Notes:
Chemical mapping of a 177-nucleotide RNA with 2A3 and DMS. DMS adducts were read by reverse transcription with MarathonRT. For 2A3, 3,240 sequencing reads were counted. For DMS, 5,421 sequencing reads were counted. 2A3 adducts were read by reverse transcription with SuperScript II with manganese.

RNA sequence: GGGAACGACUCGAGUAGAGUCGAAAAGCAGGAUGCCCUGGAUGAAGCACUGCUCUUCUUCCACGCAGAGCCACCAGCUGUGCCCCUGCCUGUGCUGCGGCGCUUCCCCUCCCUGGUGCAGCUGGGCACAGCGGGCGAUAUUCGUAUCGCCCGCUGUAAAAGAAACAACAACAACAAC
Reactivity to 2A3 in 0.01 (KOAc 150mM, MgCl2 10mM, bicine 150mM(pH8.5), 24C), signal-to-noise 2, nucleotides 027 to 126: g020c000a000g000g010a060u060g030c000c010c020u030g010g020a020u010g030a020a000g010c060a070c300u200g080c180u020c010u070u000c000u020u000c030c020a040c040g060c040a050g000a040g200c060c060a080c020c010a040g000c000u010g010u020g000c000c020c000c010u010g000c000c020u030g020u040g000c020u000g000c040g190g000c000g030c000u150u090c000c000c020c000u040c000c000c000u010g000g000u020g000c020a000g000c010u020g000g000g010c000
Reactivity to DMS in 0.01 (KOAc 150mM, MgCl2 10mM, bicine 150mM(pH8.5), 24C), signal-to-noise 5, nucleotides 027 to 126: g010c030a020g020g010a300u000g000c020c030c060u000g010g000a040u000g010a040a030g010c140a180c230u010g010c200u010c020u000u000c030u000u000c020c030a100c300g020c110a080g020a100g010c080c160a100c040c020a020g000c000u000g000u000g020c000c010c020c030u000g000c020c110u000g010u000g010c020u010g010c140g040g010c050g000c040u010u000c020c010c000c020u000c010c000c000u000g010g040u000g000c010a020g000c010u000g010g000g020c140